This 177-nucleotide RNA was probed chemically with 2A3 and DMS.
For DMS the reverse transcriptase was MarathonRT.
The reactions ran in a buffer of 150 mM KOAc, 10 mM MgCl2 and 150 mM bicine (pH 8.5), at 24 C.
Source: RMDB library M2PK90, as collected in RNAgym.
2A3 adducts were read by reverse transcription with SuperScript II with manganese.

RNA sequence: GGGAACGACUCGAGUAGAGUCGAAAAGCAAAGAAAUUUUAUCCCAAUAAGGCGAAGUAAGCAAGUCGACCCAACGCCAGGGCGCUAGCGAGCUUACGAGCCCUAGCAGACUAAUAGCGAGAAAAAACAUUACCGUUCGUUUCGACGAACGGUAAUGAAAAGAAACAACAACAACAAC
Reactivity to 2A3 in 0.01 (KOAc 150mM, MgCl2 10mM, bicine 150mM(pH8.5), 24C), signal-to-noise 1, nucleotides 027 to 126: g010c030a060a090a140g110a010a300a050u100u040u060u070a040u060c010c020c000a010a100u050a020a020g000g000c020g070a070a020g010u030a000a000g030c030a010a010g000u000c020g200a300c030c000c020a080a020c050g090c100c000a000g000g000g000c020g000c010u000a000g090c010g070a000g000c040u040u030a040c040g010a020g030c020c030c000u060a030g000c020a040g020a120c050u100a060a120u110a180g030c040g010a080g130a060a080a010a000a010a000
Reactivity to DMS in 0.01 (KOAc 150mM, MgCl2 10mM, bicine 150mM(pH8.5), 24C), signal-to-noise 1, nucleotides 027 to 126: g030c110a060a040a150g020a080a090a110u000u000u000u000a100u030c010c000c000a070a100u000a100a060g050g000c000g000a110a090g010u020a000a110g000c000a060a130g020u000c030g020a230c070c000c000a100a040c120g040c100c150a070g040g020g000c030g000c200u000a050g030c080g010a170g010c000u000u000a000c030g000a300g000c010c000c020u000a090g010c010a080g000a070c170u000a030a110u010a090g010c060g000a060g010a030a020a040a080a020a180